[RMDB]
The data come from the RNA Mapping Database (RMDB), library OK3TST.
Structure probing data (DMS and 2A3) for a 207-nucleotide construct.
For DMS the reverse transcriptase was MarathonRT.
The reactions ran in a buffer of 150 mM KOAc, 10 mM MgCl2 and 150 mM bicine (pH 8.5), at 24 C.
2A3 adducts were read by reverse transcription with SuperScript II with manganese.
As a SHAPE reagent, 2A3 marks flexible, mostly unpaired nucleotides at the ribose 2'-OH.
RNA sequence: GGGAACGACUCGAGUAGAGUCGAAAAGGGACGGAAAUAUGGGCCCUCAGCAAGAUUUAUCUGUGACAUCCGUCGGGAACUCUGCCGUCGUCUCUGGACCUUCAGAAGAGCCUUGGCCUUGGUUCGUGGAUCUUCAUUAUCAGACGAUGAGGGUGAAAACUUAAGAGUGUUUCGACACUCUUAAGUUAAAAGAAACAACAACAACAAC
Reactivity to DMS in 0.01 (KOAc 150mM, MgCl2 10mM, bicine 150mM(pH8.5), 24C), signal-to-noise 2, nucleotides 027 to 156: g020g030g010a080c030g010g000a040a080a140u010a040u010g010g010g010c010c000c020u000c020a100g010c060a130a070g000a140u000u000u000a080u010c060u010g010u000g030a110c060a100u000c020c020g000u000c010g050g030g010a080a060c010u000c010u010g020c000c020g020u000c100g010u000c000u000c020u010g030g010a070c050c030u010u000c070a090g000a080a110g010a160g000c020c020u000u000g010g010c040c030u000u000g000g010u000u000c050g020u010g040g020a020u000c020u000u000c010a070u000u000a060u000c050a070g010a070c030g010a090u000g010a080g020g040g010u010g000a060a110
Reactivity to 2A3 in 0.01 (KOAc 150mM, MgCl2 10mM, bicine 150mM(pH8.5), 24C), signal-to-noise 3, nucleotides 027 to 156: g070g000g010a030c050g000g100a040a090a010u220a110u140g070g030g000c010c000c010u010c000a030g020c040a080a170g030a160u160u270u150a140u120c060u040g060u080g060a030c030a100u010c000c030g010u000c030g020g050g000a050a030c020u030c030u120g020c050c000g000u010c000g030u020c010u010c000u020g060g010a070c000c000u040u030c120a120g020a220a010g000a040g000c010c010u050u090g030g000c000c000u060u020g020g010u050u010c070g020u080g010g040a060u040c010u070u000c030a030u030u080a060u100c030a000g020a030c030g030a040u080g010a030g020g020g010u040g080a080a220